[RMDB]
Chemical mapping of a 207-nucleotide RNA with 2A3.
The reactions ran in a buffer of 150 mM KOAc, 10 mM MgCl2 and 150 mM bicine (pH 8.5), at 24 C.
Source: RMDB library M2RFPK, as collected in RNAgym.
RNA sequence: GGGAACGACUCGAGUAGAGUCGAAAAAGAUCGAUUACGAUCGAUCAAUGAUGCCCCUCACCCACCUCUGAAGAUCCCAGGUGGGCGACGGAACGGAGCACGGGAUCACGAGCAGUACGCUGCUCGAAAAAGAACUAGACCUUCGGGUCUAGUUCAAGGCUGUAUAGCAGUUCGCUGCUAUACAGCCAAAAGAAACAACAACAACAAC
Reactivity to 2A3 in 0.01 (KOAc 150mM, MgCl2 10mM, bicine 150mM(pH8.5), 24C), signal-to-noise 1, nucleotides 027 to 156: a000g000a000u020c010g000a000u090u080a080c300g030a020u000c000g000a000u000c000a000a090u140g130a090u190g100c000c000c000c000u000c000a020c000c000c000a000c030c000u000c070u080g100a060a020g000a000u010c000c000c000a000g000g000u010g000g000g000c000g020a000c020g020g050a020a130c100g000g120a120g070c140a060c140g000g000g000a000u000c010a040c000g000a010g020c000a000g000u140a000c270g060c050u000g000c000u000c010g000a040a000a000a000a000g000a000a000c000u000a010g000a010c010c030u030u200c300g100g000g000u000c000u000a000g000u000u010c000a010a010

Notes: Reactivities are rounded to 0.1 and cut off at 0 and 3.